Source: RMDB library M2PK50, as collected in RNAgym. An RNA of 177 nucleotides, treated with DMS and 2A3 and read out base by base. For 2A3, 2,201 sequencing reads were counted. Values are in units of 0.01, from 0 to 300, in steps of 10. The DMS profile rests on 1,735 reads. For 2A3 the reverse transcriptase was SuperScript II with manganese.

[RMDB]
RNA sequence: GGGAACGACUCGAGUAGAGUCGAAAAUAAUGCCACUUCGGUGGCAUUAGCAGGUACGAAAGCCCUAUCAAGUACAAAAUCCCAAACUACAAGAUAGGCAAAUAAUGCAUAGCUUCGGCUAUGCAAAACUCACCAUCUGAUUCGUCAGAUGGUGAGUAAAAGAAACAACAACAACAAC
Reactivity to DMS in 0.01 (KOAc 150mM, MgCl2 10mM, bicine 150mM(pH8.5), 24C), signal-to-noise 3, nucleotides 027 to 126: u000a020a000u010g000c000c000a000c000u000u030c230g050g010u000g000g000c000a010u000u000a040g040c180a130g010g000u000a080c120g000a060a030a070g020c120c000c000u000a020u000c010a040a300g000u000a000c070a050a040a130a070u000c000c030c010a050a110a100c210u000a010c030a040a280g000a010u000a000g000g020c020a090a080a070u020a060a070u000g000c000a010u000a000g000c000u000u010c190g020g010c010u000a020u000g000c000a010a010a040
Reactivity to 2A3 in 0.01 (KOAc 150mM, MgCl2 10mM, bicine 150mM(pH8.5), 24C), signal-to-noise 2, nucleotides 027 to 126: u040a000a010u020g010c020c000a010c010u030u070c210g060g000u000g080g010c000a000u000u000a000g000c030a050g060g180u170a050c070g080a200a050a010g030c000c000c010u010a020u010c020a070a010g000u000a040c030a070a120a010a130u030c000c000c010a010a050a030c110u090a020c000a050a040g010a010u000a000g030g000c010a000a010a010u240a070a050u090g010c010a000u000a000g000c010u060u040c300g070g000c010u010a000u020g010c010a000a010a000